[RMDB]
RNA sequence: GGGAACGACUCGAGUAGAGUCGAAAAGCUUAAUAACCUGCGCUGAGCCCUUCUCCCCCAGCUUGCGUGUGUCCUAGGGAAUUGGAAGGUCAUCCUUCACAGGAUCGUGUGGAAGUCCUGCUCGGGGUCCAAACAUGGUAAUUCGUUACCAUGUUAACAUAGCGGUCAAUUUCGAUUGACCGCUAUGAAAAGAAACAACAACAACAAC
Reactivity to DMS in 0.01 (KOAc 150mM, MgCl2 10mM, bicine 150mM(pH8.5), 24C), signal-to-noise 2, nucleotides 027 to 156: g020c070u000u020a090a120u000a090a080c040c010u020g010c040g010c050u010g010a080g020c010c010c010u010u000c040u000c020c010c010c020c040a100g040c010u010u000g010c040g000u000g030u010g020u010c030c010u030a090g000g050g010a080a100u000u000g020g010a110a090g000g040u010c060a080u000c000c000u000u010c060a090c080a030g010g010a020u000c050g040u000g050u000g020g010a070a110g000u000c020c030u010g000c060u010c090g020g020g050g010u000c040c090a120a030a020c000a010u010g010g010u010a020a100u000u000c300g000u000u000a020c010c000a000u000g010u000u000a010a190
Reactivity to 2A3 in 0.01 (KOAc 150mM, MgCl2 10mM, bicine 150mM(pH8.5), 24C), signal-to-noise 2, nucleotides 027 to 156: g020c060u200u110a140a030u170a250a160c000c030u080g010c040g010c070u060g060a060g020c010c000c000u120u140c140u100c040c010c000c000c000a010g020c020u040u040g020c010g010u080g030u010g000u010c000c040u110a060g000g010g060a060a110u050u100g020g060a040a030g030g040u090c030a090u130c040c000u020u060c040a010c010a120g030g020a030u020c050g050u030g010u070g090g010a050a010g040u020c020c040u020g000c010u020c070g000g010g020g000u020c020c050a010a000a030c010a000u000g010g020u000a030a030u060u030c080g010u020u000a000c000c000a000u010g000u010u000a010a010